[RMDB]
RNA sequence: GGGAACGACUCGAGUAGAGUCGAAAAUCUUACUCUGGAGAGAGCAGGCAGGACAGGACUGGUGGUGACUUCUCGACUCCCCUCAGGAGUUCUCUCGUUUCCACGAAGAGAUCCUGCCCAUGUUCGACGAUAUCAUUGCAUUCGUGCAAUGAUAUCGAAAAGAAACAACAACAACAAC
Reactivity to DMS in 0.01 (KOAc 150mM, MgCl2 10mM, bicine 150mM(pH8.5), 24C), signal-to-noise 5, nucleotides 027 to 126: u000c030u010u000a090c060u000c030u000g010g020a160g010a070g000a030g020c090a060g000g020c070a030g010g000a040c070a100g000g000a140c080u010g010g020u000g010g000u000g000a030c020u000u000c050u000c150g010a060c020u000c010c000c110c170u010c250a090g020g020a060g000u010u000c060u000c030u000c080g000u000u000u000c070c040a030c030g010a090a080g010a120g000a130u000c000c010u000g000c020c010c050a060u010g000u000u000c060g010a220
Reactivity to 2A3 in 0.01 (KOAc 150mM, MgCl2 10mM, bicine 150mM(pH8.5), 24C), signal-to-noise 3, nucleotides 027 to 126: u020c000u030u080a050c040u060c080u170g120g010a090g000a010g000a010g040c020a020g010g000c010a010g010g000a020c020a030g050g100a070c040u110g050g000u020g010g010u020g030a010c020u100u040c080u080c070g020a030c020u040c020c010c000c010u070c030a010g000g000a020g000u080u000c030u000c000u010c030g000u000u050u010c010c000a010c040g060a090a030g020a000g010a080u000c000c000u010g010c000c000c010a090u070g020u010u030c010g030a020
The data come from the RNA Mapping Database (RMDB), library OK2TST. This 177-nucleotide RNA was probed chemically with DMS and 2A3. The RNA was probed in 150 mM KOAc, 10 mM MgCl2 and 150 mM bicine (pH 8.5) at 24 C. 2A3 adducts were read by reverse transcription with SuperScript II with manganese.